[RMDB]
RNA sequence: GGGAACGACUCGAGUAGAGUCGAAAAAUAAAUAUCAGUUAUAUGACUGACGGAUCGUGGAAUUAACCACAUGAAGUAUAACGAUGACAAUGCCGACCGUCUGGGCGUUGCAUCCGCUCCAAAAAAACUACACACAGAUGUUCGCAUCUGUGUGUAGAAAAGAAACAACAACAACAAC
Reactivity to 2A3 in 0.01 (KOAc 150mM, MgCl2 10mM, bicine 150mM(pH8.5), 24C), signal-to-noise 1, nucleotides 027 to 126: a000u060a030a030a020u170a050u080c020a020g010u050u000a150u060a060u300g110a020c010u020g000a010c010g000g000a040u170c130g000u030g050g000a110a170u240u070a180a200c010c010a020c000a000u110g100a030a020g070u100a040u020a140a020c000g000a010u000g060a010c000a000a050u000g020c010c000g040a080c000c020g020u000c020u080g110g000g000c000g000u000u000g010c000a010u010c000c060g010c020u030c020c020a000a010a020a000a000a000a020
Reactivity to DMS in 0.01 (KOAc 150mM, MgCl2 10mM, bicine 150mM(pH8.5), 24C), signal-to-noise 1, nucleotides 027 to 126: a070u010a080a040a110u000a080u000c040a070g030u010u010a120u000a070u000g000a100c100u000g010a030c050g010g000a170u000c120g000u030g000g010a200a130u000u010a130a040c000c030a030c020a140u030g000a120a090g030u000a050u000a070a030c070g000a020u000g000a040c010a030a030u000g000c010c020g000a110c100c020g000u000c020u010g000g000g000c000g000u000u000g000c010a100u000c020c010g020c030u000c020c010a000a000a060a050a050a050a030